[RMDB]
RNA sequence: GGGAACGACUCGAGUAGAGUCGAAAACAAUCCAUGGAGUCAGACUCAAUGAAAGCAUCUUUAUUGGACCAGGAAAUGACCAUGUUGGAUAUGUUCGAGACCUUGCUGAUCCAACUAGUAGAGAACAGUACUGGGAACCAUUCGUGGUUCCCAGUACAAAAGAAACAACAACAACAAC
Reactivity to DMS in 0.01 (KOAc 150mM, MgCl2 10mM, bicine 150mM(pH8.5), 24C), signal-to-noise 1, nucleotides 027 to 126: c100a090a090u000c010c040a140u020g010g010a200g010u000c100a050g000a240c060u000c040a030a080u000g000a050a040a110g000c110a040u000c110u000u000u000a050u020u000g000g010a080c050c060a060g010g000a050a030a040u000g010a030c060c010a050u000g010u000u000g010g020a100u000a070u000g020u000u000c070g000a150g000a080c120c020u000u000g010c030u010g000a050u000c000c000a020a000c060u000a040g000u000a130g000a120g000a040a070c150a080

This 177-nucleotide RNA was probed chemically with DMS. Reactivities are given for positions 27 through 126. DMS adducts were read by reverse transcription with MarathonRT. The reactions ran in a buffer of 150 mM KOAc, 10 mM MgCl2 and 150 mM bicine (pH 8.5), at 24 C. In probing experiments dimethyl sulfate is read out at A N1 and C N3, which are open when not base-paired.